[RMDB]
RNA sequence: GGGAACGACUCGAGUAGAGUCGAAAACACGUCGCAGUCGCUGUACAUGCUGUUCAUGGUCCCGAAGACGCCGAUGGCUCCGCGGGCGGCGCUGGCGAACUUGGGAUGGCGCGCCCGGAGGCGCAUGUGGUUAAACUCAUUUCGAUGAGUUUAACCAAAAAGAAACAACAACAACAAC
Reactivity to 2A3 in 0.01 (KOAc 150mM, MgCl2 10mM, bicine 150mM(pH8.5), 24C), signal-to-noise 9, nucleotides 027 to 126: c030a000c020g050u040c030g000c030a030g040u080c020g010c080u030g030u100a040c020a070u090g040c010u070g050u120u100c040a050u110g060g010u040c010c000c010g010a050a020g040a020c030g010c030c020g130a120u140g060g000c010u010c030c030g040c040g040g040g010c050g050g010c010g000c020u020g030g010c040g040a080a060c040u080u130g060g010g050a070u100g050g000c030g000c000g010c020c000c010g040g020a070g010g000c030g010c020a020u120g070
Reactivity to DMS in 0.01 (KOAc 150mM, MgCl2 10mM, bicine 150mM(pH8.5), 24C), signal-to-noise 5, nucleotides 027 to 126: c080a090c070g000u000c040g020c050a050g010u010c040g010c040u000g000u010a080c070a060u020g000c060u000g010u010u010c040a080u010g010g000u010c010c000c010g010a080a060g000a210c060g000c030c040g000a090u030g000g000c010u010c020c040g010c020g000g000g010c030g010g010c020g030c020u000g000g010c030g030a040a090c130u020u010g010g000g000a080u010g000g010c010g010c020g020c010c000c020g020g000a120g010g000c030g020c060a050u010g000